The record gives the reactivity of an RNA of 207 nucleotides to DMS and 2A3.
[RMDB]
RNA sequence: GGGAACGACUCGAGUAGAGUCGAAAAUUUGCAUGAUGAUUAUUCCUUCGAGAAUUCUGCAAUUCGGACAAUCUCCUCAGUUUACUGUGGCGAGAUUGCAUGUUGACAUUUCUACACUUGAUCUGACUAAAGUACAAUUAGCUUCGGCUAAUUGUACGAAAUCCUACCUGUUCGCAGGUAGGAUUUCAAAAGAAACAACAACAACAAC
Reactivity to DMS in 0.01 (KOAc 150mM, MgCl2 10mM, bicine 150mM(pH8.5), 24C), signal-to-noise 2, nucleotides 027 to 156: u000u010u020g010c000a000u000g020a120u000g000a200u010u000a140u000u000c040c040u010u000c190g020a190g000a090a060u010u010c030u010g010c010a040a070u000u010c030g000g000a110c020a040a040u020c020u010c000c010u010c010a000g000u000u000u010a080c040u030g040u000g010g020c060g030a030g010a020u010u000g000c020a100u000g010u010u010g010a130c160a180u000u000u000c010u020a060c020a090c080u000u010g010a110u000c070u000g020a250c130u010a050a070a180g040u000a010c000a030a030u000u000a010g010c000u000u010c300g040g000c000u010a000a000u010u000g010u000a000c020
Reactivity to 2A3 in 0.01 (KOAc 150mM, MgCl2 10mM, bicine 150mM(pH8.5), 24C), signal-to-noise 5, nucleotides 027 to 156: u060u040u030g020c020a050u150g020a030u030g030a070u120u120a060u140u130c060c040u090u170c120g140a200g010a150a040u070u020c020u050g000c000a010a050u110u120c080g030g000a010c020a010a020u010c010u010c000c000u020c010a050g040u120u140u140a190c020u020g040u090g160g050c120g020a020g010a000u010u000g010c010a020u090g040u030u040g010a030c040a130u050u080u020c040u100a050c040a090c120u060u100g060a090u110c030u070g040a050c010u140a160a130a030g000u000a000c000a000a000u000u000a000g000c000u010u020c100g070g000c000u000a000a000u000u000g000u000a000c000

The RNA was probed in 150 mM KOAc, 10 mM MgCl2 and 150 mM bicine (pH 8.5) at 24 C. 2A3 adducts were read by reverse transcription with SuperScript II with manganese.